RNA sequence: GGGAACGACUCGAGUAGAGUCGAAAAAUUCGACGAUGACGGAGCCGUGAGCGCGUCGGUCGCGAUCACCGUAGCUCGAUCGGUGCCGUCGGGGUAUUACCCGAUCUAUGUCACCACCAGCGCCGGGCCACUGCACGUCUUUCGAGACGUGCAGUGGAAAAGAAACAACAACAACAAC
Reactivity to DMS in 0.01 (KOAc 150mM, MgCl2 10mM, bicine 150mM(pH8.5), 24C), signal-to-noise 2, nucleotides 027 to 126: a080u030u070c040g000a060c060g050a080u050g000a010c000g020g030a300g040c050c000g000u020g000a300g020c080g000c010g010u020c130g040g030u060c100g020c170g050a100u030c150a010c000c040g000u000a180g010c010u010c020g000a120u030c000g000g000u040g000c010c050g060u020c030g000g020g030g000u020a110u010u000a120c010c010c000g000a050u000c140u020a090u000g050u000c010a070c020c020a090c060c020a110g000c060g010c000c000g000g000g000
Reactivity to 2A3 in 0.01 (KOAc 150mM, MgCl2 10mM, bicine 150mM(pH8.5), 24C), signal-to-noise 3, nucleotides 027 to 126: a010u100u130c070g000a070c000g070a080u150g000a010c040g020g000a000g010c010c000g010u030g000a030g020c000g000c010g080u120c040g050g010u060c030g000c050g200a070u130c000a010c030c030g000u020a010g010c000u020c020g020a070u110c050g010g000u020g060c000c000g000u000c000g000g000g000g000u090a120u150u250a100c000c000c000g020a060u060c030u110a210u090g070u040c010a000c040c000a060c040c030a020g020c020g000c000c000g010g010g000